The record gives the reactivity of an RNA of 207 nucleotides to 2A3 and DMS.
RNA sequence: GGGAACGACUCGAGUAGAGUCGAAAAUCUAUGGACUGGACCUGAUCCAAACGUUAACACCUCAAUUAAUGGCACUCCGGUAAUUAGAUCAUUUAUAUCAUUAACUAGAGACAGUAACUUAGUCACAGUCAAUGCUAGCUUUACUGGAGAAGGAAGCGUAUCAUUUAACGUUCGCGUUAAAUGAUACAAAAGAAACAACAACAACAAC
Reactivity to 2A3 in 0.01 (KOAc 150mM, MgCl2 10mM, bicine 150mM(pH8.5), 24C), signal-to-noise 8, nucleotides 027 to 156: u010c010u010a100u110g030g020a020c030u040g030g050a060c020c050u060g040a080u060c010c020a080a050a020c070g040u070u050a040a030c040a070c060c030u080c060a120a150u100u180a070a090u070g060g000c040a010c020u010c010c000g010g000u020a020a040u050u060a060g030a070u070c020a040u050u180u120a170u070a020u100c030a030u060u090a030a010c020u030a060g020a020g020a150c010a040g090u090a140a070c050u080u160a020g010u030c020a030c040a110g010u020c020a020a050u030g030c020u030a060g010c000u020u020u000a020c000u010g010g020a010g010a040a050g080g020a070a020g070c030
Reactivity to DMS in 0.01 (KOAc 150mM, MgCl2 10mM, bicine 150mM(pH8.5), 24C), signal-to-noise 4, nucleotides 027 to 156: u000c070u000a120u020g000g000a070c050u000g020g010a110c040c040u000g020a150u020c030c010a050a050a100c080g030u000u010a060a090c060a070c030c000u000c040a060a140u000u000a070a070u000g020g020c050a150c020u000c010c010g010g030u010a030a060u010u010a080g010a080u000c060a110u010u000u010a130u000a100u030c020a060u000u000a030a030c010u000a090g030a130g030a060c030a120g030u000a050a120c140u000u000a070g030u000c040a090c060a070g010u000c030a030a050u000g010c050u000a060g010c050u000u000u000a030c030u000g010g010a060g020a080a070g010g000a060a080g000c130
As a SHAPE reagent, 2A3 marks flexible, mostly unpaired nucleotides at the ribose 2'-OH. For DMS the reverse transcriptase was MarathonRT. The DMS profile rests on 7,475 reads. Source: RMDB library OK3TST, as collected in RNAgym. The 2A3 profile rests on 6,756 reads.